RNA sequence: GGGAACGACUCGAGUAGAGUCGAAAAAGUGGGAUGGGUUGAGGACGAAGUGCUGGACUGGCUUCAGCAACGGCUGGAUGGCCGCGAAGAGUCCAACCGACACUCCUGAUACAGGAGCCGGGUGGCCUUUACAAAAGUAUUUCGAUACUUUUGUAAAAAAAGAAACAACAACAACAAC
Reactivity to DMS in 0.01 (KOAc 150mM, MgCl2 10mM, bicine 150mM(pH8.5), 24C), signal-to-noise 9, nucleotides 027 to 126: a070g010u010g000g010g010a100u020g000g010g010u010u010g010a130g000g010a070c060g010a110a070g010u020g010c020u010g000g000a040c040u020g000g010c100u000u010c020a060g020c060a100a120c050g010g010c010u010g010g020a100u030g010g010c020c020g000c110g000a070a080g010a210g000u010c010c000a030a070c020c010g000a110c150a270c010u000c000c000u000g000a210u040a110c090a020g000g000a020g020c150c030g000g000g010u010g000g010c080c050
Reactivity to 2A3 in 0.01 (KOAc 150mM, MgCl2 10mM, bicine 150mM(pH8.5), 24C), signal-to-noise 9, nucleotides 027 to 126: a000g090u120g000g020g060a120u120g030g030g020u060u100g060a070g030g020a010c040g040a100a020g060u040g070c020u020g000g030a030c020u060g110g090c030u020u020c020a020g000c030a060a040c020g030g000c000u050g060g120a120u190g110g000c010c000g020c020g040a050a040g030a010g030u000c000c000a010a010c010c000g020a010c010a010c030u020c000c000u090g030a150u130a260c070a020g000g010a000g020c070c010g020g000g010u040g010g010c010c030
Structure probing data (DMS and 2A3) for a 177-nucleotide construct. The reactions ran in a buffer of 150 mM KOAc, 10 mM MgCl2 and 150 mM bicine (pH 8.5), at 24 C. The data come from the RNA Mapping Database (RMDB), libraries RFM100 and RFMREP.